The data come from the RNA Mapping Database (RMDB), library OK2TST. Chemical mapping of a 177-nucleotide RNA with 2A3 and DMS. The RNA was probed in 150 mM KOAc, 10 mM MgCl2 and 150 mM bicine (pH 8.5) at 24 C. For 2A3 the reverse transcriptase was SuperScript II with manganese. For 2A3, 1,695 sequencing reads were counted.
[RMDB]
RNA sequence: GGGAACGACUCGAGUAGAGUCGAAAAGCCUGCCGUCGGGUUCCACAUCGAUUCUUAAGGCACCACCUUCAGCGACAAAGCCGCCAAAACCAUCCAGCCGAUAGAUUCCAUAACCGCCUGGUUGCGGGAUAGACGCACUAUUCGUAGUGCGUCUAUCAAAAGAAACAACAACAACAAC
Reactivity to 2A3 in 0.01 (KOAc 150mM, MgCl2 10mM, bicine 150mM(pH8.5), 24C), signal-to-noise 2, nucleotides 027 to 126: g000c000c000u030g000c040c030g060u050c020g020g030g030u050u060c040c010a000c010a080u060c020g090a100u130u020c020u090u130a060a030g030g000c010a010c000c000a010c000c030u030u040c010a000g030c010g030a040c080a050a080a060g010c040c020g000c050c010a010a040a010a030c000c010a000u000c000c000a010g050c020c010g020a000u050a070g070a070u110u000c020c000a030u060a110a160c020c020g030c030c050u150g260g000u150u120g000c010g000g030
Reactivity to DMS in 0.01 (KOAc 150mM, MgCl2 10mM, bicine 150mM(pH8.5), 24C), signal-to-noise 3, nucleotides 027 to 126: g030c030c040u010g000c110c050g040u010c060g020g020g020u000u000c030c070a100c140a060u000c060g020a120u000u000c060u010u010a080a120g010g000c010a070c080c050a070c050c040u000u010c060a040g020c070g000a080c100a060a090a180g020c060c050g010c020c020a040a080a100a090c090c010a050u000c010c030a060g010c040c020g000a080u000a070g030a130u000u000c020c040a100u020a090a280c020c000g000c060c040u010g010g010u010u000g020c070g000g000